[RMDB]
About this RNA: An RNA of 177 nucleotides, treated with DMS and 2A3 and read out base by base. The reactions ran in a buffer of 150 mM KOAc, 10 mM MgCl2 and 150 mM bicine (pH 8.5), at 24 C. For 2A3, 772 sequencing reads were counted.
RNA sequence: GGGAACGACUCGAGUAGAGUCGAAAACGAUGCAUGCCGCGAUGCGCCGGCUAAUAUUACGCGCGUACGUAAUCGCGGCGCUAAUUAAUAUUACGGCCGUAUAGCGCGCGCGCCGCGUAUAAUCGCGGGCCAUCUAUUUCUUCGGAAAUAGAUGGCCAAAAGAAACAACAACAACAAC
Reactivity to DMS in 0.01 (KOAc 150mM, MgCl2 10mM, bicine 150mM(pH8.5), 24C), signal-to-noise 1, nucleotides 027 to 126: c070g010a090u010g000c120a040u000g040c020c040g010c040g010a040u020g000c070g000c080c060g020g000c060u000a030a070u000a080u000u000a100c050g020c050g020c040g000u000a130c060g030u000a130a120u040c190g010c040g000g000c000g010c140u000a040a110u010u010a100a070u000a080u000u000a070c110g000g000c010c020g040u000a130u010a090g000c030g020c020g000c060g010c110g100c050c000g000c000g010u000a070u010a060a050u020c000g000c040g020
Reactivity to 2A3 in 0.01 (KOAc 150mM, MgCl2 10mM, bicine 150mM(pH8.5), 24C), signal-to-noise 1, nucleotides 027 to 126: c040g040a050u250g000c120a030u180g030c060c020g040c010g020a040u080g010c000g010c060c070g060g020c040u040a010a150u160a130u270u200a030c010g000c020g000c000g030u060a080c010g040u100a250a100u190c070g010c000g030g000c000g000c020u000a030a000u070u030a110a040u010a050u170u090a080c030g050g040c020c000g010u100a090u040a060g000c000g000c020g010c010g000c000g000c160c020g000c000g130u030a020u100a200a070u060c030g000c030g100